[RMDB]
RNA sequence: GGGAACGACUCGAGUAGAGUCGAAAACAAUGUCUGGCACACAGUAAAUACUUCAUUGUUAGCUAAGAUUAUCACAGUCUAGCAAUUAGAAUAAUAUUCACCAACAUUUGUUGAGCCUUUACUAGGUCAUAGACACAUAAGCACUGCAGCAACCCAACCCUUUUAGCACCUUCGGGUGCUAAAAGGGAAAAGAAACAACAACAACAAC
Reactivity to 2A3 in 0.01 (KOAc 150mM, MgCl2 10mM, bicine 150mM(pH8.5), 24C), signal-to-noise 2, nucleotides 027 to 156: c040a010a030u050g000u030c010u050g050g000c040a020c020a010c030a080g050u060a030a110a080u110a100c070u020u050c020a020u040u000g010u000u000a020g000c020u070a140a000g000a300u270u240a130u300c070a030c070a070g110u120c010u000a000g010c000a000a000u080u080a070g020a000a020u160a100a000u090a060u110u120c040a040c060c000a010a010c020a070u070u140u070g040u000u040g010a000g050c010c000u010u010u050a080c040u020a010g060g060u020c010a060u030a080g050a020c020a000c010a090u120a120a040g000c010a020c070u060g000c050a000g010c020a020a040c000c000c000a000a050

Record summary: Structure probing data (2A3) for a 207-nucleotide construct. The reactions ran in a buffer of 150 mM KOAc, 10 mM MgCl2 and 150 mM bicine (pH 8.5), at 24 C. It was measured as part of the RMDB library OK3TST. Reactivities are rounded to 0.1 and cut off at 0 and 3.